[RMDB]
RNA sequence: GGGAACGACUCGAGUAGAGUCGAAAACAAAGUCUGUUCGCAGACUUUGAAACCUGAUAUAAUCGUCAGGAAAGGUGAUUACACGUUCUUAAGCAGAUUAUAAAAGGACGCCGUUCGCGGCGUCCAACAUUAACCUAUCGUUCGCGAUAGGUUAAUGAAAAGAAACAACAACAACAAC
Reactivity to DMS in 0.01 (KOAc 150mM, MgCl2 10mM, bicine 150mM(pH8.5), 24C), signal-to-noise 4, nucleotides 027 to 126: c010a000a000a010g010u000c000u000g010u000u010c180g030c020a020g010a010c010u000u010u000g000a050a080a160c000c010u000g010a170u000a030u010a020a010u000c020g000u010c070a080g000g000a020a040a050g010g020u010g020a300u010u000a110c050a040c010g010u000u000c010u000u000a100a150g020c090a090g010a040u000u000a030u000a050a060a110a180g010g000a000c010g030c000c000g020u000u010c170g020c020g010g030c010g010u010c000c010a020a030
Reactivity to 2A3 in 0.01 (KOAc 150mM, MgCl2 10mM, bicine 150mM(pH8.5), 24C), signal-to-noise 3, nucleotides 027 to 126: c020a000a000a000g000u000c000u010g020u040u080c220g010c090a000g000a010c000u010u010u010g000a040a010a010c000c000u030g040a010u010a000u010a130a040u050c040g060u050c050a010g080g000a050a030a000g190g010u070g030a190u160u300a120c020a010c070g040u070u000c020u070u050a100a040g050c060a030g050a070u040u050a020u070a070a110a030a040g000g000a000c000g000c020c000g030u030u050c230g000c010g040g000c000g010u000c000c000a000a000